[RMDB]
RNA sequence: GGGAACGACUCGAGUAGAGUCGAAAAGAGCGUUGAAGAACAAUGUGAGGUUACAAAGACAUGGCUCACGGAGUGUAUUCAGGAUAAUUUACAGGUUGUCGCAAAAUGUCCAGGCCAACUUGUCACCACCGCACAAGGAGUUCGCUCCUUGUGCGGUAAAAGAAACAACAACAACAAC
Reactivity to DMS in 0.01 (KOAc 150mM, MgCl2 10mM, bicine 150mM(pH8.5), 24C), signal-to-noise 1, nucleotides 027 to 126: g030a130g030c000g020u010u000g000a040a040g000a260a100c000a000a130u030g040u000g030a070g020g000u050u000a000c190a120a060a080g000a080c220a050u070g000g020c030u000c000a010c030g020g000a300g000u000g040u040a060u040u000c030a030g000g000a220u000a100a010u080u040u040a300c020a000g030g030u000u000g010u020c090g000c040a110a120a050a000u000g000u000c030c070a100g000g050c020c000a030a080c140u000u080g000u010c230a010c170c050
Reactivity to 2A3 in 0.01 (KOAc 150mM, MgCl2 10mM, bicine 150mM(pH8.5), 24C), signal-to-noise 2, nucleotides 027 to 126: g080a000g000c120g040u060u040g070a090a090g000a130a000c020a050a210u210g060u010g040a090g000g040u130u100a010c030a090a120a090g240a110c040a070u040g170g000c040u040c020a090c000g030g000a000g050u160g000u080a060u040u040c010a000g000g010a020u020a100a020u250u060u060a050c080a060g070g070u000u040g120u100c080g000c180a140a070a000a070u160g030u040c030c040a020g000g060c000c000a000a000c000u000u000g050u050c010a010c140c020